[RMDB]
RNA sequence: GGGAACGACUCGAGUAGAGUCGAAAAAAGUGUGUAUCAACAAUGGAUAUUGAAUAAGUCCCUGUAGCUUGUACACACCGCCCGUCACUAUCUCAGAUGUUUUUCAGGAUGAAGAGUCCAGGCUCUGAAUCUUAAGCGAGUUCGCUCGCUUAAGAUUAAAAGAAACAACAACAACAAC
Reactivity to DMS in 0.01 (KOAc 150mM, MgCl2 10mM, bicine 150mM(pH8.5), 24C), signal-to-noise 4, nucleotides 027 to 126: a030a020g000u000g000u000g010u010a010u030c050a030a020c050a150a080u000g010g010a030u000a100u030u020g000a180a140u040a070a150g000u000c010c000c100u000g010u010a080g010c200u000u020g020u000a010c010a020c010a000c000c050g000c000c000c010g010u030c130a060c130u020a050u000c050u010c030a030g010a060u040g000u000u010u010u050u030c130a060g010g010a060u000g000a110a070g010a110g000u000c010c040a120g000g000c010u000c000u000g000
Reactivity to 2A3 in 0.01 (KOAc 150mM, MgCl2 10mM, bicine 150mM(pH8.5), 24C), signal-to-noise 8, nucleotides 027 to 126: a010a010g020u040g000u010g000u010a030u230c030a010a020c020a050a070u070g010g010a040u060a130u120u250g100a170a150u220a220a040g040u020c010c000c000u020g100u030a030g000c090u010u020g000u000a000c010a000c000a000c000c020g010c010c000c010g090u120c020a060c090u110a130u110c050u020c060a020g020a070u120g120u020u040u020u140u150c050a040g020g010a020u050g030a050a080g060a010g120u000c010c020a020g020g020c000u000c000u010g020

Source: RMDB libraries RFM100 and RFMREP, as collected in RNAgym. Structure probing data (DMS and 2A3) for a 177-nucleotide construct. The reactions ran in a buffer of 150 mM KOAc, 10 mM MgCl2 and 150 mM bicine (pH 8.5), at 24 C. For DMS the reverse transcriptase was MarathonRT.